[RMDB]
RNA sequence: GGGAACGACUCGAGUAGAGUCGAAAAACGUCGAGUUCGUUGAGCGGCGGAGGGAUGCAGGCGGCCGCUACUAUCAUGGGUUUGAGGUUGGGAUCGAAGUAAGAGAUUUUGUGGGGCUUGUCUAGCUUGUCUUGGAAGCGUCUGAUUUCGAUGGACGGCUUCCUCUUAUAUUCGUAUAAGAGGAAGCAAAAGAAACAACAACAACAAC
Reactivity to 2A3 in 0.01 (KOAc 150mM, MgCl2 10mM, bicine 150mM(pH8.5), 24C), signal-to-noise 1, nucleotides 027 to 156: a000c020g080u020c000g000a040g050u130u060c020g000u030u090g040a020g000c030g000g060c040g040g040a030g020g020g010a060u060g040c070a030g080g000c000g010g000c010c040g060c030u010a130c030u050a000u160c050a090u070g030g000g060u000u050u080g070a030g000g000u050u050g010g000g000a030u080c040g010a030a000g050u080a050a020g000a030g030a100u040u120u270u230g020u060g020g000g040g010c010u000u040g020u030c010u010a000g000c050u030u030g010u040c000u000u030g040g020a100a000g050c000g020u050c050u080g050a190u010u160u180c120g000a020u090g030g050a040c010g030
Structure probing data (2A3) for a 207-nucleotide construct. The RNA was probed in 150 mM KOAc, 10 mM MgCl2 and 150 mM bicine (pH 8.5) at 24 C.